[RMDB]
An RNA of 177 nucleotides, treated with 2A3 and DMS and read out base by base. Source: RMDB library OK1LIB, as collected in RNAgym.

RNA sequence: GGGAACGACUCGAGUAGAGUCGAAAAGACUCAUGGGAAGUCGGCGUGACUCCCGACUAACGUGGAUGUCCGCUUUCUGGCUCCAGGCAAACAGUGUUGGUGCGGAGGUUGGUUAGUGGCGCGCCAACAUAGUCGGGAAUUUCGAUUCCCGACUAUGAAAAGAAACAACAACAACAAC
Reactivity to 2A3 in 0.01 (KOAc 150mM, MgCl2 10mM, bicine 150mM(pH8.5), 24C), signal-to-noise 5, nucleotides 027 to 126: g020a000c010u010c020a050u080g020g000g050a060a000g010u010c010g010g020c020g030u070g020a030c010u020c010c000c000g030a040c050u090a110a010c000g050u130g030g030a040u100g040u020c000c010g010c000u030u070u020c020u030g040g000c010u000c010c000a030g040g000c040a030a100a060c030a130g040u030g020u120u030g030g010u030g000c010g020g020a070g040g040u110u070g020g000u040u050a020g010u040g020g000c000g000c010g000c000c000a010a020
Reactivity to DMS in 0.01 (KOAc 150mM, MgCl2 10mM, bicine 150mM(pH8.5), 24C), signal-to-noise 9, nucleotides 027 to 126: g010a100c020u020c020a110u020g000g000g020a110a040g000u000c030g000g000c060g000u020g000a040c050u000c040c000c000g010a170c170u030a090a110c010g010u040g010g010a040u030g010u010c020c030g000c080u010u010u020c060u010g000g000c030u010c020c030a080g000g010c090a090a090a120c180a100g010u010g000u000u000g000g020u000g010c020g010g000a100g000g010u000u020g010g000u010u020a080g020u020g000g000c030g010c010g000c000c000a010a040

For DMS, 44,206 sequencing reads were counted.